[RMDB]
RNA sequence: GGGAACGACUCGAGUAGAGUCGAAAAAUUAUGUGGAUUCCGUUACAGUUAAAGAGACUGUUGUUCAGUUUAAUUAUCGUAGAGACGGUCAACCAUUCUACGAGCGGUUUCCCCUCUGCGCUUUUACCAAGUCUCCUGUUCGCAGGAGACAAAAGAAACAACAACAACAAC
Reactivity to 2A3 in 0.01 (KOAc 150mM, MgCl2 10mM, bicine 150mM(pH8.5), 24C), signal-to-noise 6, nucleotides 027 to 129: a000u220u100a120u120g030u060g020g000a000u170u010c000c000g020u040u070a040c020a060g010u050u090a070a060a000g160a020g010a010c000u020g110u250u100g080u210u180c020a050g000u000u000u020a040a040u040u050a040u030c030g000u040a010g020a000g000a070c090g010g030u040c040a120a150c050c000a030u070u010c030u040a010c020g010a020g000c030g020g000u030u020u000c000c000c000c000u090c050u060g030c030g050c020u030u020u060u030a090c020c020a100a030
Reactivity to DMS in 0.01 (KOAc 150mM, MgCl2 10mM, bicine 150mM(pH8.5), 24C), signal-to-noise 2, nucleotides 027 to 129: a080u060u050a050u000g000u030g000g010a000u000u040c000c000g040u020u020a160c100a070g020u000u000a000a000a000g020a200g030a040c070u020g020u040u010g020u000u060c060a130g020u000u000u000a000a000u060u020a000u020c030g050u040a020g040a130g040a040c250g020g010u050c160a080a120c140c030a150u010u000c060u040a050c080g010a000g030c090g020g020u010u000u000c040c050c010c000u010c000u000g060c110g060c150u040u040u020u000a040c170c070a060a110